[RMDB]
The record gives the reactivity of an RNA of 207 nucleotides to DMS and 2A3. For 2A3, 2,387 sequencing reads were counted. Source: RMDB library OK3TST, as collected in RNAgym. The reactions ran in a buffer of 150 mM KOAc, 10 mM MgCl2 and 150 mM bicine (pH 8.5), at 24 C.

RNA sequence: GGGAACGACUCGAGUAGAGUCGAAAAUGUCCAUCCGAAACGUACGUUCAAGCAUGCGAAAGGAUGGAUCAAGUUCCAUCCGAAACGUACGUCAUCCAACAACCUGAUGCAUCGCAAUAGGAUGGGAAAGCAUGCCAGAAGACACCGUACGGAAACCAGUCUGCUGGAUUUUCGAAUCCAGCAGACUAAAAGAAACAACAACAACAAC
Reactivity to DMS in 0.01 (KOAc 150mM, MgCl2 10mM, bicine 150mM(pH8.5), 24C), signal-to-noise 1, nucleotides 027 to 156: u000g000u010c060c030a020u000c070c000g000a210a040a030c000g000u000a000c010g030u010u000c080a200a180g050c040a060u000g000c030g030a160a210a200g050g010a000u000g010g020a020u000c060a090a270g040u010u000c030c000a000u010c010c000g020a130a040a060c000g020u020a000c030g000u000c000a050u030c060c000a110a140c210a070a200c100c040u010g000a020u000g000c080a060u000c070g100c020a140a180u000a130g010g000a030u000g000g040g000a110a040a060g000c040a080u000g010c000c040a260g010a130a130g010a090c080a070c070c040g020u030a060c050g000g020a080a090a130c050c130
Reactivity to 2A3 in 0.01 (KOAc 150mM, MgCl2 10mM, bicine 150mM(pH8.5), 24C), signal-to-noise 3, nucleotides 027 to 156: u150g030u000c000c000a010u010c010c000g060a050a030a030c000g000u010a000c000g030u020u140c080a120a050g040c040a070u070g010c070g050a090a020a030g000g010a000u010g000g000a010u030c010a000a030g100u030u000c000c000a000u000c000c010g030a050a020a010c000g010u030a000c020g040u050c000a020u040c030c050a050a050c030a040a060c120c030u050g010a030u060g000c030a070u060c040g000c040a060a080u030a090g000g000a000u020g000g000g000a030a030a000g020c010a010u040g020c000c010a040g050a180a010g040a130c050a020c070c070g100u110a040c040g050g040a040a050a000c010c010
For DMS, 1,538 sequencing reads were counted.